[RMDB]
RNA sequence: GGGAACGACUCGAGUAGAGUCGAAAAUAACAAUUGCCUUGCGCAAUGGGGAACGGCCGGAAUUGAAGCAUCUCAGUACGGCCAGGAAGAGAAAUCGAAUGAGACGCCGUUAGUAAUGGCGAAUGAAUACAUCCAAUACCUUCGGGUAUUGGAUGUAAAAAGAAACAACAACAACAAC
Reactivity to 2A3 in 0.01 (KOAc 150mM, MgCl2 10mM, bicine 150mM(pH8.5), 24C), signal-to-noise 3, nucleotides 027 to 126: u220a030a060c110a080a070u050u020g000c010c000u130u290g010c040g000c090a000a020u070g010g030g000g020a090a080c120g010g000c000c000g020g060a140a010u030u010g030a030a060g080c090a140u040c020u000c050a010g000u010a010c010g000g040c000c000a000g000g020a080a020g000a000g060a100a060a020u100c130g040a080a080u130g110a050g000a060c010g010c010c000g030u020u030a130g070u170a070a110u080g000g010c000g000a000a040u050g090a050a010
Reactivity to DMS in 0.01 (KOAc 150mM, MgCl2 10mM, bicine 150mM(pH8.5), 24C), signal-to-noise 5, nucleotides 027 to 126: u060a130a100c090a160a030u000u000g010c000c010u060u020g000c120g000c020a000a020u010g000g000g030g020a200a110c180g000g020c000c000g010g000a090a020u010u010g010a040a170g020c230a110u030c140u000c020a000g030u000a050c000g000g000c000c000a040g010g010a130a060g000a170g000a030a060a090u020c060g000a060a080u010g000a170g000a200c010g020c000c010g020u000u020a180g010u030a110a030u000g000g000c000g020a050a030u020g010a140a130